[RMDB]
RNA sequence: GGGAACGACUCGAGUAGAGUCGAAAACUAUAGAGAUCUCUAUAGUUCGCCUACCACUUUGCAGGCUGUCGGUUCAUGCGUUGUAUGCCAUUCACAGACUUCCCUACGCUGUGGGACAUGCAUCCGUUACGCUUGACGUUCGCGUCAAGCAAAAGAAACAACAACAACAAC
Reactivity to 2A3 in 0.01 (KOAc 150mM, MgCl2 10mM, bicine 150mM(pH8.5), 24C), signal-to-noise 6, nucleotides 027 to 129: c000u010a010u000a000g030a020g080a230u160c050u010c000u200a000u000a000g000u000u050c030g040c000c000u070a150c010c020a080c020u070u070u120g080c050a020g040g000c010u020g030u050c030g050g010u050u040c060a020u120g040c010g040u020u050g030u060a030u070g030c000c030a090u050u060c020a010c010a070g050a080c030u050u040c020c000c000u010a040c080g010c010u020g000u010g000g000g020a020c030a070u060g000c000a020u020c030c000g060u030u030a040c070
Reactivity to DMS in 0.01 (KOAc 150mM, MgCl2 10mM, bicine 150mM(pH8.5), 24C), signal-to-noise 4, nucleotides 027 to 129: c020u010a010u000a000g020a030g030a180u070c140u030c010u080a000u010a030g030u000u000c120g000c040c050u030a060c090c060a000c090u020u040u020g000c020a040g000g000c030u020g030u020c080g000g000u030u020c080a080u090g020c100g040u030u040g050u030a050u020g060c000c000a170u050u020c000a030c040a000g050a070c140u000u040c030c010c030u030a150c090g020c010u020g040u030g040g040g040a080c160a030u030g000c010a040u060c030c050g000u030u050a060c110